An RNA of 177 nucleotides, treated with DMS and 2A3 and read out base by base. The RNA was probed in 150 mM KOAc, 10 mM MgCl2 and 150 mM bicine (pH 8.5) at 24 C. 2A3 adducts were read by reverse transcription with SuperScript II with manganese. DMS adducts were read by reverse transcription with MarathonRT.
RNA sequence: GGGAACGACUCGAGUAGAGUCGAAAAGCUUCCCGGGAAACCAAAGCUUUUGGGCUCCGGGGGAAGAAUGGUUGCAAAGCUGAAACUUAAAGGAAUUGACGGAAGGGUACCACCAGGAGUGGAGCCUCAUAUAGAUCCCUUUCGAGGGAUCUAUAUGAAAAGAAACAACAACAACAAC
Reactivity to DMS in 0.01 (KOAc 150mM, MgCl2 10mM, bicine 150mM(pH8.5), 24C), signal-to-noise 6, nucleotides 027 to 126: g000c030u010u000c010c030c020g010g010g000a030a050a130c020c010a020a040a110g020c230u030u020u010u000g010g000g010c140u000c010c010g010g030g010g020g010a030a010g000a090a070u020g010g010u010u010g000c080a080a100a090g030c040u030g010a090a050a100c050u010u010a060a090a100g000g020a080a090u030u010g000a080c090g010g000a050a040g010g010g010u010a100c020c010a030c040c040a140g020g010a120g020u010g000g000a300g010c030c020u000
Reactivity to 2A3 in 0.01 (KOAc 150mM, MgCl2 10mM, bicine 150mM(pH8.5), 24C), signal-to-noise 7, nucleotides 027 to 126: g030c020u060u030c010c000c000g010g000g000a100a030a000c010c000a040a010a060g300c080u130u070u060u030g030g020g010c040u030c020c020g110g010g020g030g010a010a030g020a050a100u200g060g010u090u080g010c090a090a050a040g030c040u100g080a060a050a060c040u070u120a130a050a080g070g010a100a120u090u100g040a060c070g020g040a050a040g060g010g010u090a090c000c000a010c010c020a080g070g040a110g070u040g010g000a020g030c020c000u020